The record gives the reactivity of an RNA of 207 nucleotides to 2A3 and DMS.

RNA sequence: GGGAACGACUCGAGUAGAGUCGAAAACUAUAGCUUUCUCUGUUCUGGACCUUUGUAAGAAUGAAAUCGUAUAAUAUGUGGCCUUUGGUAACUGUCUUCUUUCAUUUAGCAUCAUGUUUUUAAGGUUCAUCCACAUUGUAGCAUGCAGCAGUGCUUAUGAUGCUGAUUAGUUCGCUAAUCAGCAUCAAAAAGAAACAACAACAACAAC
Reactivity to 2A3 in 0.01 (KOAc 150mM, MgCl2 10mM, bicine 150mM(pH8.5), 24C), signal-to-noise 2, nucleotides 027 to 156: c040u080a060u140a200g050c020u000u150u050c080u010c000u050g040u090u050c060u130g050g010a130c030c040u070u080u140g080u100a070a150g020a050a070u100g020a060a080a050u080c010g000u040a020u060a230a130u100a060u120g020u010g050g000c050c000u020u030u070g030g000u030a030a000c000u020g110u060c040u110u000c010u030u130u020c020a110u010u080u050a050g030c000a010u080c020a030u050g070u010u080u030u050u040a010a020g020g000u000u040c020a030u000c040c000a020c030a140u010u010g040u000a020g080c030a050u080g020c000a020g010c020a020g070u030g070c010u010u050a120
Reactivity to DMS in 0.01 (KOAc 150mM, MgCl2 10mM, bicine 150mM(pH8.5), 24C), signal-to-noise 1, nucleotides 027 to 156: c040u000a120u000a170g010c050u010u000u000c010u000c010u000g010u000u000c040u000g010g020a060c020c020u000u000u000g020u010a120a150g010a080a070u000g000a050a060a060u000c040g090u000a100u010a090a130u000a050u000g020u000g000g050c000c000u000u000u000g030g040u000a050a100c050u000g010u010c050u000u000c010u000u000u000c040a090u000u000u010a110g030c050a050u000c060a070u000g010u000u000u000u000u000a050a050g050g010u000u000c020a090u000c040c030a030c050a120u000u000g000u010a030g030c050a070u000g000c010a140g000c060a130g030u000g010c020u000u000a240
For DMS, 3,045 sequencing reads were counted. The data come from the RNA Mapping Database (RMDB), library OK3TST. The RNA was probed in 150 mM KOAc, 10 mM MgCl2 and 150 mM bicine (pH 8.5) at 24 C.